Conditions: 150 mM KOAc, 10 mM MgCl2 and 150 mM bicine (pH 8.5), 24 C.
Chemical mapping of a 177-nucleotide RNA with DMS and 2A3.
Values are in units of 0.01, from 0 to 300, in steps of 10.
DMS adducts were read by reverse transcription with MarathonRT.

[RMDB]
RNA sequence: GGGAACGACUCGAGUAGAGUCGAAAACUGAUUUUGUGAUAAUCAGGACAGGCUAAACAUUCGCUAUAGUACGACCAUGCAUGUGUCCCCAGACCUAGUUCUUUACCUGGGUCUGGUUUUCUCAAUGAUUCCUACUAUAUUUCGAUAUAGUAGGAAUAAAAGAAACAACAACAACAAC
Reactivity to DMS in 0.01 (KOAc 150mM, MgCl2 10mM, bicine 150mM(pH8.5), 24C), signal-to-noise 9, nucleotides 027 to 126: c020u000g010a020u000u000u010u020g020u020g010a090u020a030a020u000c010a020g010g010a090c090a090g010g010c030u000a070a100a090c130a090u010u010c060g010c060u010a090u010a090g010u010a100c070g000a050c150c070a060u010g010c040a060u010g010u010g000u010c030c080c000c000a010g000a010c010c000u000a010g010u010u010c200u020u020u020a090c300c010u000g000g000g000u000c000u000g000g000u000u000u000u000c010u000c030a070a080u010g000
Reactivity to 2A3 in 0.01 (KOAc 150mM, MgCl2 10mM, bicine 150mM(pH8.5), 24C), signal-to-noise 9, nucleotides 027 to 126: c010u010g020a040u030u040u100u150g270u070g100a180u170a150a020u020c010a010g000g040a020c030a020g050g010c030u100a090a100a040c040a100u100u100c030g010c050u100a050u070a210g070u110a070c040g020a040c030c040a040u110g010c020a040u080g050u030g030u120c010c000c000c000a000g000a000c000c000u010a010g030u140u140c090u160u250u140a080c010c010u010g000g000g000u000c000u000g000g000u000u010u020u000c000u000c000a030a050u070g020